[RMDB]
RNA sequence: GGGAACGACUCGAGUAGAGUCGAAAAUCGCCAACGGCGUGAGGCGGAUUACCGCAGUGGCUUGAUUGCUCGCCGUGAAGCCAGUGACGCCAUUGCUGGGCAGCGCGGUGAAUACCAUGAGCGUGCAGCAAAAGACUAUUUUCGAAUAGUCUUUUGCAAAAGAAACAACAACAACAAC
Reactivity to DMS in 0.01 (KOAc 150mM, MgCl2 10mM, bicine 150mM(pH8.5), 24C), signal-to-noise 9, nucleotides 027 to 126: u000c030g010c000c010a070a180c110g020g000c030g030u000g010a120g010g010c020g010g010a250u010u010a100c050c030g010c040a100g020u010g010g010c020u000u010g020a080u000u000g010c050u000c060g010c020c020g000u000g000a090a090g010c010c020a040g010u000g000a060c120g010c130c150a140u000u000g010c030u000g010g010g010c040a060g010c080g010c020g000g000u000g010a060a070u010a150c050c020a070u000g010a130g010c030g010u000g010c120a200
Reactivity to 2A3 in 0.01 (KOAc 150mM, MgCl2 10mM, bicine 150mM(pH8.5), 24C), signal-to-noise 7, nucleotides 027 to 126: u050c000g010c020c010a070a060c060g070g000c010g020u060g020a050g030g020c040g020g020a100u100u150a140c020c010g000c020a040g040u040g050g010c000u060u140g060a100u090u130g020c020u010c020g000c020c000g020u020g030a020a010g020c000c000a020g000u010g060a030c040g050c060c030a080u030u090g000c040u070g040g140g000c020a030g040c020g000c010g010g010u030g020a050a030u090a100c030c020a040u070g020a020g060c040g010u090g030c030a030

This 177-nucleotide RNA was probed chemically with DMS and 2A3. Reactivities are given for positions 27 through 126. Source: RMDB library OK2TST, as collected in RNAgym. The reactions ran in a buffer of 150 mM KOAc, 10 mM MgCl2 and 150 mM bicine (pH 8.5), at 24 C. DMS adducts were read by reverse transcription with MarathonRT. 2A3 adducts were read by reverse transcription with SuperScript II with manganese.